RNA sequence: GGGAACGACUCGAGUAGAGUCGAAAAGAAAGGCAGCAAGUGCAGCCCACGCAGAGGCAUGCUUUUGCAUGCCCAGUCGAGCCCACGACUAAGGGCAGCUGCGCCACUGAGGGCAGCUGCCGAAAGAGCUCAUAUCAGCAUUCGUGCUGAUAUGAGCAAAAGAAACAACAACAACAAC
Reactivity to DMS in 0.01 (KOAc 150mM, MgCl2 10mM, bicine 150mM(pH8.5), 24C), signal-to-noise 2, nucleotides 027 to 126: g020a070a120a090g000g020c020a040g010c020a100a050g010u000g060c020a120g030c010c000c080a090c170g050c160a140g020a150g010g050c000a030u000g010c000u020u000u000u000g000c010a020u000g000c000c050c050a040g000u010c030g020a090g000c000c000c000a300c010g000a000c010u000a190a150g000g000g030c000a050g010c010u000g000c000g010c000c040a150c300u000g010a130g030g000g020c040a000g000c000u000g000c000c010g010a000a060a120g000a180
Reactivity to 2A3 in 0.01 (KOAc 150mM, MgCl2 10mM, bicine 150mM(pH8.5), 24C), signal-to-noise 2, nucleotides 027 to 126: g060a000a070a000g000g000c010a000g000c040a230a150g060u120g100c020a020g000c020c020c000a030c060g120c060a040g060a200g070g000c020a040u040g010c000u210u300u100u200g000c030a090u000g000c000c000c020a000g020u000c000g000a010g000c010c000c000a020c010g030a000c050u080a100a050g050g050g020c000a000g000c000u000g000c020g060c020c000a100c250u250g080a160g000g030g000c020a010g000c000u000g020c000c000g000a000a020a010g100a000
Annotation:
This 177-nucleotide RNA was probed chemically with DMS and 2A3. The reactions ran in a buffer of 150 mM KOAc, 10 mM MgCl2 and 150 mM bicine (pH 8.5), at 24 C. DMS adducts were read by reverse transcription with MarathonRT. The data come from the RNA Mapping Database (RMDB), library OK2TRN. Reactivities are given for positions 27 through 126.